Structure probing data (2A3 and DMS) for a 207-nucleotide construct. DMS adducts were read by reverse transcription with MarathonRT. The data come from the RNA Mapping Database (RMDB), library OK3TST. The RNA was probed in 150 mM KOAc, 10 mM MgCl2 and 150 mM bicine (pH 8.5) at 24 C. For 2A3 the reverse transcriptase was SuperScript II with manganese.

[RMDB]
RNA sequence: GGGAACGACUCGAGUAGAGUCGAAAAAAUCACUUAAACUUAUUGCUGAUGAGACGCAGGCGCGAGUGACGUCGAUCGAGCAGUUGAAGGCAAGUUUUGACGAUCAGAUUAGCGCAAGCAAUAGCGAAUUGCGUGAAGUUAUAGCGACUGAGACUGGAAAUAUGGUAACAUUCGUGUUACCAUAUUUAAAAGAAACAACAACAACAAC
Reactivity to 2A3 in 0.01 (KOAc 150mM, MgCl2 10mM, bicine 150mM(pH8.5), 24C), signal-to-noise 5, nucleotides 027 to 156: a000a000u160c040a030c060u110u110a120a080a010c010u070u060a060u150u100g020c020u030g030a090u060g040a050g020a110c070g000c090a040g030g020c010g000c010g030a020g080u050g010a030c010g010u000c020g030a060u020c030g010a010g020c010a100g030u130u130g090a100a030g070g020c020a030a060g030u010u030u060u100g050a050c050g020a110u020c040a050g060a160u080u140a010g010c000g010c010a000a010g020c020a040a120u010a100g040c060g100a100a110u030u050g000c010g000u050g040a030a010g010u050u070a080u090a070g050c020g030a030c050u050g000a020g020a050c030u040g030g050
Reactivity to DMS in 0.01 (KOAc 150mM, MgCl2 10mM, bicine 150mM(pH8.5), 24C), signal-to-noise 5, nucleotides 027 to 156: a050a030u000c020a050c030u000u000a050a110a150c060u000u000a070u010u010g020c020u010g010a150u000g020a160g040a090c040g000c020a100g020g010c020g020c030g010a100g020u000g010a070c000g030u000c030g010a060u010c030g020a240g010c020a140g020u000u000g010a130a200g010g020c050a060a200g020u010u010u000u000g030a090c030g010a140u000c030a070g010a100u000u000a190g010c020g020c000a050a040g010c050a080a080u000a120g030c090g000a070a120u010u000g020c010g030u000g020a060a080g020u000u000a090u000a110g020c010g020a070c030u000g010a110g010a220c030u000g020g000